[RMDB]
RNA sequence: GGGAACGACUCGAGUAGAGUCGAAAACAAACUAACUUCGGUUAGUUUGAAAGAACGCUGCAACGCGCAGAGCUCUCGCGAGAGGGCGAAUGCACAAAGAAAAAAGAUAAUCGUUCGCGAUUAUCAAGGGUUAUACAUACUUCGGUAUGUAUAACCCAAAAGAAACAACAACAACAAC
Reactivity to 2A3 in 0.01 (KOAc 150mM, MgCl2 10mM, bicine 150mM(pH8.5), 24C), signal-to-noise 2, nucleotides 027 to 126: c000a020a000a000c000u010a000a000c000u030u030c060g000g000u010u000a000g000u020u000u020g020a020a000a020g050a090a020c040g000c130u090g020c040a050a060c110g060c030g000c060a010g010a000g040c000u000c000u000c010g010c050g000a060g000a020g040g000g000c020g030a030a040u030g010c040a030c040a060a180a090g120a060a110a020a010a000a000g000a010u010a020a000u000c010g000u070u060c290g000c010g060a010u010u010a010u000c030a000a030
Reactivity to DMS in 0.01 (KOAc 150mM, MgCl2 10mM, bicine 150mM(pH8.5), 24C), signal-to-noise 2, nucleotides 027 to 126: c010a000a000a000c000u000a000a000c000u000u000c200g010g000u000u000a010g000u030u000u010g000a060a060a120g000a170a170c100g000c030u000g000c170a100a070c100g000c040g030c010a010g010a300g010c000u000c000u010c010g000c300g000a250g020a020g020g000g010c000g000a030a130u000g000c010a110c160a040a090a150g020a020a030a060a060a110a040g010a010u000a000a000u000c000g020u000u000c110g000c010g000a000u000u000a010u010c010a080a100
Structure probing data (2A3 and DMS) for a 177-nucleotide construct. The 2A3 profile rests on 1,971 reads. The data come from the RNA Mapping Database (RMDB), library M2PK50. For 2A3 the reverse transcriptase was SuperScript II with manganese. DMS adducts were read by reverse transcription with MarathonRT. The reactions ran in a buffer of 150 mM KOAc, 10 mM MgCl2 and 150 mM bicine (pH 8.5), at 24 C.